[RMDB]
RNA sequence: GGGAACGACUCGAGUAGAGUCGAAAAGAUCAAAAUCUAAUUACUGUUACAAGCAACAAGAAUCAAAGAGUAACAUCUCCUUGCUACACAGGUUAGAAGACUCCUUAUUGCCACACAGAUGAAUUCUUGACUAGCAAAUGCACAUAAACCACAUCCACCAAAAUUUAUGCUUCGGCAUAAAUUUUGGAAAAGAAACAACAACAACAAC
Reactivity to 2A3 in 0.01 (KOAc 150mM, MgCl2 10mM, bicine 150mM(pH8.5), 24C), signal-to-noise 2, nucleotides 027 to 156: g050a070u110c030a060a060a110a000u060c010u090a090a050u170u130a140c000u030g050u130u100a070c040a180a000g060c010a010a060c040a100a060g070a100a060u200c090a120a110a000g090a040g030u120a050a130c030a120u060c010u020c020c010u040u070g050c010u010a040c020a000c000a010g040g010u010u020a020g040a110a020g050a090c040u090c020c010u050u070a110u070u110g010c000c000a020c000a000c040a060g010a020u050g030a190a000u090u000c020u030u030g040a070c020u050a020g010c030a000a000a180u050g010c010a030c010a110u120a050a070a030c000c070a050c010a090u120c060c150a040

This 207-nucleotide RNA was probed chemically with 2A3. The data come from the RNA Mapping Database (RMDB), library OK3TST. Conditions: 150 mM KOAc, 10 mM MgCl2 and 150 mM bicine (pH 8.5), 24 C.